[RMDB]
RNA sequence: GGGAACGACUCGAGUAGAGUCGAAAAGGGAGGCUAAUCAGGGAAGUUCUGAGUCAGGUCGUCCUGGAAAAACUACAUUGACCUCUGGAGCUCAAGAGAGGCCAGGGGACAAACACAUGGCUCAGCACUUGUGUCCCAUAUUCGUAUGGGACACAAGAAAAGAAACAACAACAACAAC
Reactivity to DMS in 0.01 (KOAc 150mM, MgCl2 10mM, bicine 150mM(pH8.5), 24C), signal-to-noise 3, nucleotides 027 to 126: g000g020g020a100g020g020c070u000a080a060u010c090a040g010g000g010a130a090g010u000u000c030u010g000a030g020u000c030a040g010g020u010c090g010u010c040c020u000g000g030a080a070a070a070a160c120u000a050c220a170u000u000g020a060c000c010u000c010u000g000g000a100g000c030u000c020a100a130g000a120g000a040g000g010c000c010a020g000g010g020g010a040c050a010a040a080c190a050c170a090u000g000g010c030u000c020a040g010c180a120
Reactivity to 2A3 in 0.01 (KOAc 150mM, MgCl2 10mM, bicine 150mM(pH8.5), 24C), signal-to-noise 2, nucleotides 027 to 126: g050g030g010a030g080g000c060u050a070a090u140c080a060g010g070g100a090a000g030u120u030c010u010g000a000g020u010c010a030g010g010u040c030g040u030c010c000u030g030g000a080a120a020a020a060c090u170a050c040a150u030u070g030a070c000c000u000c000u010g000g060a060g170c000u040c050a200a230g230a010g000a000g200g000c000c000a000g010g010g000g000a000c010a010a020a000c070a010c010a050u050g020g020c020u000c010a010g000c020a030